[RMDB]
RNA sequence: GGGAACGACUCGAGUAGAGUCGAAAAGGUGGCUCCUUCUCACGAGAGGGAUGUCGUCAUCGGGAGUCACCGAUUUAGCAUGUUCGUCCUACUUUACUACGGAGUACCGUGUAGGACGUUCAUGCGAGGGAUCGUGUACCUUCGGGUAUACGAUCCCAAAAGAAACAACAACAACAAC
Reactivity to DMS in 0.01 (KOAc 150mM, MgCl2 10mM, bicine 150mM(pH8.5), 24C), signal-to-noise 4, nucleotides 027 to 126: g000g030u000g000g000c000u000c000c000u010u000c110u000c300a100c100g050a030g030a090g020g040g010a100u030g010u030c060g030u030c130a040u000c100g040g000g000a010g000u010c010a010c010c000g000a050u030u010u010a110g000c010a000u000g010u000u000c000g000u000c000c000u000a000c020u010u020u030a130c240u040a130c060g000g000a230g000u050a100c060c040g030u020g010u000a000g000g000a000c000g000u000u000c000a000u000g000c000g000a090
Reactivity to 2A3 in 0.01 (KOAc 150mM, MgCl2 10mM, bicine 150mM(pH8.5), 24C), signal-to-noise 9, nucleotides 027 to 126: g000g000u010g000g000c000u010c000c000u080u060c070u040c030a050c050g140a140g050a060g130g240g020a100u160g130u110c070g070u080c030a060u050c020g000g000g000a010g000u000c000a000c000c000g000a000u010u010u050a020g000c000a000u000g010u000u000c000g000u000c010c000u000a020c010u190u250u070a130c120u040a010c020g050g020a150g210u120a250c010c010g010u020g000u030a000g000g000a000c000g000u000u000c000a000u000g000c000g000a090

Description:
An RNA of 177 nucleotides, treated with DMS and 2A3 and read out base by base. For DMS, 9,329 sequencing reads were counted. For 2A3, 25,937 sequencing reads were counted. The reactions ran in a buffer of 150 mM KOAc, 10 mM MgCl2 and 150 mM bicine (pH 8.5), at 24 C.